[RMDB]
Record summary: Source: RMDB library OK2TRN, as collected in RNAgym. Chemical mapping of a 177-nucleotide RNA with 2A3 and DMS. The DMS profile rests on 1,134 reads. Values cover nucleotides 27 to 126.
RNA sequence: GGGAACGACUCGAGUAGAGUCGAAAAGAAAGAGACUAAGAUUGUGAUUGACACUACUGGCAGUACCAAACCGAAGCAGGACGAUCUCAUUCUCACUUGUUUCAGAGGGUGGGUGAAGCAGUUGCAAAGAUAGCUCAGCAUUCGUGCUGAGCUAUCUAAAAGAAACAACAACAACAAC
Reactivity to 2A3 in 0.01 (KOAc 150mM, MgCl2 10mM, bicine 150mM(pH8.5), 24C), signal-to-noise 1, nucleotides 027 to 126: g070a000a060a000g040a000g010a000c020u060a110a000g070a200u060u080g100u050g060a090u020u150g040a030c000a000c110u100a000c000u050g010g000c040a000g010u070a050c030c010a060a090a030c010c030g070a060a000g060c040a010g070g040a000c020g030a080u000c060u000c020a020u070u020c010u010c010a060c060u020u140g050u050u110u060c060a090g030a050g010g000g020u020g020g010g020u040g010a010a030g040c020a000g030u100u090g010c040a080a080
Reactivity to DMS in 0.01 (KOAc 150mM, MgCl2 10mM, bicine 150mM(pH8.5), 24C), signal-to-noise 2, nucleotides 027 to 126: g010a040a110a100g000a160g000a090c100u000a080a090g010a090u000u010g020u000g000a120u000u000g000a160c070a030c070u000a040c110u010g020g000c030a070g000u000a080c030c070a060a070a130c050c040g000a030a100g000c010a040g000g000a070c090g000a110u000c040u000c010a050u000u000c020u000c030a110c150u000u000g010u010u010u000c100a120g000a020g000g010g000u000g000g030g000u020g000a090a160g020c060a030g000u000u000g030c060a090a090
Overview
For DMS the reverse transcriptase was MarathonRT. The reactions ran in a buffer of 150 mM KOAc, 10 mM MgCl2 and 150 mM bicine (pH 8.5), at 24 C.